[RMDB]
RNA sequence: GGGAACGACUCGAGUAGAGUCGAAAAAGUAGGUCCCCACCCGUUGCAUGCAUUGGGGAAUAUGUAACUGGAUGCCUAGAUAGCUUUGCUAAUGUUUUACUUUCAAGAUUCACAAUAUACUAUGCUCGACUAAGAUUUACUUCGGUAAAUCUUAGUCAAAAGAAACAACAACAACAAC
Reactivity to DMS in 0.01 (KOAc 150mM, MgCl2 10mM, bicine 150mM(pH8.5), 24C), signal-to-noise 7, nucleotides 027 to 126: a070g020u010a060g010g010u010c030c000c010c070a150c050c020c030g030u000u000g010c030a030u000g020c270a100u010u020g000g000g000g010a120a110u000a030u000g010u000a020a030c040u010g020g010a080u000g010c030c030u000a100g000a150u010a050g010c050u000u000u000g010c040u000a070a100u000g000u000u010u000u010a070c070u000u010u000c080a060a090g010a090u010u000c050a060c090a070a070u000a080u010a080c090u000a060u000g010c120u010c170
Reactivity to 2A3 in 0.01 (KOAc 150mM, MgCl2 10mM, bicine 150mM(pH8.5), 24C), signal-to-noise 6, nucleotides 027 to 126: a000g100u080a030g030g050u070c000c020c000c010a010c000c020c010g020u030u050g020c020a020u010g010c020a040u080u200g040g010g000g030a010a020u120a020u040g030u010a040a020c010u020g020g030a040u060g010c000c000u070a120g050a170u080a020g040c030u100u080u200g000c020u060a080a050u070g050u010u110u050u050a060c020u070u080u110c040a080a040g020a190u080u090c050a030c010a150a030u120a040u050a230c080u060a070u210g050c050u060c080